[RMDB]
RNA sequence: GGGAACGACUCGAGUAGAGUCGAAAAAAGUUUUAUGUGUAAACUCUCAAACAAUCAGGCAUAAGAGAAGAAUACAAAUCUGAAAUAAAUUAACAGAAAAAUAGUUUGAGAGCUUACACAGAAGCUAACUGCAUAUAAAGUUCGCUUUAUAUGCAGUAAAAGAAACAACAACAACAAC
Reactivity to 2A3 in 0.01 (KOAc 150mM, MgCl2 10mM, bicine 150mM(pH8.5), 24C), signal-to-noise 6, nucleotides 027 to 126: a000a000g150u100u030u030u050a150u030g000u000g000u000a010a010a020c000u010c010u000c000a010a000a020c010a010a100u080c040a040g140g030c080a130u150a300a020g070a010g030a160a080g070a130a070u170a150c080a060a120a040u040c000u020g050a030a050a110u130a050a080a030u160u110a140a040c030a030g120a030a110a010a000a020u140a040g000u000u000u000g000a000g000a000g000c000u000u000a000c000a000c000a000g000a000a000g000c000u020a030
Reactivity to DMS in 0.01 (KOAc 150mM, MgCl2 10mM, bicine 150mM(pH8.5), 24C), signal-to-noise 2, nucleotides 027 to 126: a100a010g010u020u000u000u010a130u000g010u000g000u000a020a000a010c000u000c000u000c020a000a010a030c000a120a180u010c070a040g010g030c110a130u000a090a140g020a110g010a160a030g000a120a090u030a070c110a050a060a090u010c020u000g000a080a070a130u030a070a070a070u060u030a090a160c050a080g000a010a070a070a080a070u000a100g020u000u010u000g010a000g000a010g000c070u000u000a000c000a030c020a000g000a030a070g020c020u000a050